[RMDB]
The data come from the RNA Mapping Database (RMDB), library OK3TST. An RNA of 207 nucleotides, treated with 2A3 and read out base by base. For 2A3 the reverse transcriptase was SuperScript II with manganese.
RNA sequence: GGGAACGACUCGAGUAGAGUCGAAAACCAAAUAAGGGCUUCUUGGCCAGCUGUGUAUCCUUCAGACAUAAUUUUGAAUUACAAUAUAACUCAUAUUAUUGUGGAAAUCAAUGCCUCGUUUUAUUCUCAUAAUGAAAGUCUGAUGAAAAGACCACCAGUAUAUUUAGCCUUUCGAGGCUAAAUAUACAAAAGAAACAACAACAACAAC
Reactivity to 2A3 in 0.01 (KOAc 150mM, MgCl2 10mM, bicine 150mM(pH8.5), 24C), signal-to-noise 2, nucleotides 027 to 156: c020c010a000a170a030u170a040a020g100g000g000c070u100u140c010u290u300g010g020c070c050a030g020c140u070g000u010g030u140a060u120c010c030u020u010c000a000g000a020c010a020u230a170a080u160u080u010u070g030a040a030u140u010a060c020a060a030u050a030u050a130a100c030u060c120a040u190a020u250u180a030u010u080g030u030g060g050a110a110a050u090c020a010a080u100g040c030c000u080c030g000u000u000u070u000a030u090u000c060u000c070a050u090a160a000u030g040a030a010a000g010u000c000u000g010a060u050g030a050a080a040a110g050a030c010c050a000c040c010a030